Overview: This 177-nucleotide RNA was probed chemically with DMS and 2A3. Conditions: 150 mM KOAc, 10 mM MgCl2 and 150 mM bicine (pH 8.5), 24 C. DMS (dimethyl sulfate) methylates the pairing face of unpaired adenines and cytosines. DMS adducts were read by reverse transcription with MarathonRT. The 2A3 profile rests on 7,793 reads.
RNA sequence: GGGAACGACUCGAGUAGAGUCGAAAAUUCAGUUAACCAAAUUGUCUUGCGUAAUUCUAAUGGUGCUUGCAUUUGGAACGCUGCUGCAUAUAUGAAACUCUCGGAUGCACUUAAACGACAGAUUCGCCCUAUCUAUAACGUUCGCGUUAUAGAUAGGAAAAGAAACAACAACAACAAC
Reactivity to DMS in 0.01 (KOAc 150mM, MgCl2 10mM, bicine 150mM(pH8.5), 24C), signal-to-noise 5, nucleotides 027 to 126: u000u000c040a060g010u000u000a130a300c020c020a020a060a040u000u000g010u010c020u000u000g000c040g010u010a070a080u010u010c160u000a110a070u010g020g020u000g020c030u000u010g010c030a060u000u000u000g010g010a070a110c210g010c040u000g010c160u000g000c060a030u010a090u010a090u000g000a050a050a070c070u000c050u000c030g000g000a070u000g000c050a060c160u000u010a020a040a110c070g010a060c090a070g000a170u000u000c070g000c140
Reactivity to 2A3 in 0.01 (KOAc 150mM, MgCl2 10mM, bicine 150mM(pH8.5), 24C), signal-to-noise 6, nucleotides 027 to 126: u040u010c010a010g020u030u050a060a040c010c000a010a000a030u080u080g090u080c020u020u030g000c010g060u060a080a110u160u100c070u180a170a100u170g100g020u080g040c000u000u040g000c000a010u010u010u010g020g010a020a010c040g000c010u020g010c010u040g000c030a020u050a010u030a030u200g080a080a060a040c030u030c000u020c060g040g020a030u040g030c020a010c030u060u110a060a080a020c030g060a010c030a050g070a110u040u030c020g030c000